[RMDB]
RNA sequence: GGGAACGACUCGAGUAGAGUCGAAAAAGCUUAUUUUAGUAAGAAACAUGUAGAAGUUUUUACUGAUGGUAAGCUUAAUUGUAGUUUCCAGGACGCUGCCUCUAAUAUCUUUGUUAUUAACAAGGACCCAUCAUUAGUAGUUCGCUACUAAUGAUGGAAAAGAAACAACAACAACAAC
Reactivity to DMS in 0.01 (KOAc 150mM, MgCl2 10mM, bicine 150mM(pH8.5), 24C), signal-to-noise 4, nucleotides 027 to 126: a010g010c000u010u000a010u000u010u000u000a010g000u000a020a020g010a020a020a020c020a060u020g020u010a200g020a180a140g010u000u000u010u000u000a000c010u000g010a010u010g010g000u000a010a010g010c000u000u000a040a140u000u000g020u000a090g010u000u000u000c010c010a160g010g000a070c070g020c060u010g010c030c030u000c050u000a070a080u000a130u000c010u000u000u000g000u010u000a140u010u000a050a040c030a030a040g000g000a070c300
Reactivity to 2A3 in 0.01 (KOAc 150mM, MgCl2 10mM, bicine 150mM(pH8.5), 24C), signal-to-noise 4, nucleotides 027 to 126: a000g010c020u020u020a020u000u030u020u040a000g010u010a030a040g020a160a040a020c040a030u140g070u220a100g070a300a080g050u000u000u020u010u010a010c000u010g030a040u100g000g020u010a000a000g000c000u010u060a020a040u090u070g060u040a060g000u000u020u000c030c000a010g050g010a010c040g010c090u040g020c020c010u010c020u040a120a150u050a100u090c030u060u030u020g030u070u080a300u150u110a060a010c010a040a020g030g000a020c010